[RMDB]
RNA sequence: GGGAACGACUCGAGUAGAGUCGAAAAGCAUCGACGACGGUCCUGCCAUGAGACCGUAACGAGGACAUGUCGCCUCGAAUGGCGUCGGGGAGCCGGUAGCUUACCCCAAGGAUGAGCGCCUAAUGCCUAUACCCGAUUCGCUUCGGCGAAUCGGGAACUAUUCCGUCUCCUUCGGGAGACGGAAUAGAAAAGAAACAACAACAACAAC
Reactivity to 2A3 in 0.01 (KOAc 150mM, MgCl2 10mM, bicine 150mM(pH8.5), 24C), signal-to-noise 3, nucleotides 027 to 156: g010c000a050u090c030g080a070c030g010a000c010g020g000u030c020c020u050g160c030c060a220u210g020a130g000a150c020c000g010u000a010a080c010g000a010g040g000a040c040a120u160g050u160c090g040c020c000u010c000g020a050a110u100g020g020c000g040u080c030g020g000g000g010a000g020c010c070g110g030u120a060g000c010u080u150a240c010c000c010c030a010a040g060g020a090u160g040a040g000c000g030c010c000u090a100a010u100g040c020c010u110a120u110a250c000c000c000g000a000u010u010c000g000c010u070u040c190g070g000c010g000a000a000u000c000g000g000g000a010a000
An RNA of 207 nucleotides, treated with 2A3 and read out base by base. Conditions: 150 mM KOAc, 10 mM MgCl2 and 150 mM bicine (pH 8.5), 24 C. For 2A3 the reverse transcriptase was SuperScript II with manganese. It was measured as part of the RMDB library M2RFPK.